An RNA of 207 nucleotides, treated with DMS and 2A3 and read out base by base. DMS adducts were read by reverse transcription with MarathonRT. The reactions ran in a buffer of 150 mM KOAc, 10 mM MgCl2 and 150 mM bicine (pH 8.5), at 24 C.

RNA sequence: GGGAACGACUCGAGUAGAGUCGAAAAGAUAAGGAUCUACUGAGAGCUAGAGCGCACUGCCAGCACAUUUCAGUGAUUAGGCAAACGCCGGUAGCCACUUAAGGCAAAGGCCAUUUGCGUUGUGUUUGAAAAGGAAAAGGCAGCCUCACCUAAUGAACAUCCACAUUAGAUUCGUCUAAUGUGGAUGAAAAGAAACAACAACAACAAC
Reactivity to DMS in 0.01 (KOAc 150mM, MgCl2 10mM, bicine 150mM(pH8.5), 24C), signal-to-noise 2, nucleotides 027 to 156: g000a180u000a070a150g000g020a090u000c020u000a060c040u000g010a150g020a110g030c050u000a080g020a100g030c050g010c080a050c060u010g000c020c000a190g010c050a010c030a200u000u020u000c050a140g010u000g020a080u000u010a120g040g000c040a050a100a060c160g010c000c020g070g030u000a140g050c010c020a080c130u010u010a110a130g020g010c040a040a080a220g040g010c020c030a130u000u000u020g030c090g000u010u000g010u000g020u000u000u000g010a020a070a100a080g020g000a080a060a120a170g030g020c000a030g020c020c020u010c010a160c030c010u010a050a090u000g010a080a160
Reactivity to 2A3 in 0.01 (KOAc 150mM, MgCl2 10mM, bicine 150mM(pH8.5), 24C), signal-to-noise 2, nucleotides 027 to 156: g100a040u230a070a030g100g050a000u000c000u070a090c080u090g030a020g000a010g130c060u110a050g040a040g090c000g010c060a050c120u070g030c040c030a050g080c040a020c030a080u150u250u110c070a060g030u070g040a110u090u140a080g040g000c000a080a000a040c060g000c010c020g060g050u110a020g010c020c000a080c000u100u140a100a050g000g000c040a020a010a030g020g000c010c000a080u040u040u050g020c020g030u030u010g000u020g000u050u020u140g070a060a110a010a050g020g000a050a090a000a010g020g000c020a040g000c000c020u090c000a030c010c010u020a040a070u130g040a030a020